Source: RMDB library M2RFPK, as collected in RNAgym. The record gives the reactivity of an RNA of 207 nucleotides to DMS and 2A3. 2A3 adducts were read by reverse transcription with SuperScript II with manganese. The 2A3 profile rests on 3,869 reads. The DMS profile rests on 3,033 reads. DMS adducts were read by reverse transcription with MarathonRT. The RNA was probed in 150 mM KOAc, 10 mM MgCl2 and 150 mM bicine (pH 8.5) at 24 C.
RNA sequence: GGGAACGACUCGAGUAGAGUCGAAAAGGACUGCGCAGUCCGGCAACUUCAGCAGAGAGCCCGCUAUACGUGACGGAUUGGCUGAAGCGUACAGAAAUAUUGAGCCUCCUGCAAGAGGCAGCCAAGCAAAACGUACGUGAGUUCGCUCACGUACGAAGUUCCAUAUAACCUUCGGGUUAUAUGGAACAAAAGAAACAACAACAACAAC
Reactivity to DMS in 0.01 (KOAc 150mM, MgCl2 10mM, bicine 150mM(pH8.5), 24C), signal-to-noise 2, nucleotides 027 to 156: g000g000a060c010u010g020c170g020c100a130g020u000c000c000g010g010c030a080a040c040u000u010c030a110g020c010a040g010a080g000a110g000c030c000c010g000c020u000a120u000a070c020g030u010g030a200c000g000g010a300u020u000g020g000c000u000g020a080a180g000c000g050u010a140c070a080g000a070a080a220u000a230u000u060g000a140g000c000c000u000c010c040u030g010c160a130a090g010a000g000g000c020a000g000c000c030a060a130g020c090a060a030a120a170c000g010u000a000c020g020u020g020a060g000u000u010c300g030c000u000c000a000c000g020u020a000c000g010a020a060
Reactivity to 2A3 in 0.01 (KOAc 150mM, MgCl2 10mM, bicine 150mM(pH8.5), 24C), signal-to-noise 5, nucleotides 027 to 156: g010g000a030c010u070g060c170g050c140a010g000u000c010c000g010g000c010a040a040c010u030u020c000a010g000c040a020g090a010g000a030g180c020c020c010g000c050u090a090u050a190c140g100u050g100a050c010g010g020a080u090u100g090g020c020u020g010a010a000g000c020g030u050a050c050a030g150a080a120a010u240a080u160u130g040a020g010c010c010u020c000c050u110g060c030a060a030g000a010g020g000c010a000g010c000c010a050a020g010c040a020a080a060a030c010g000u010a000c000g010u000g000a000g000u040u090c130g020c090u000c000a000c000g010u000a000c000g000a000a000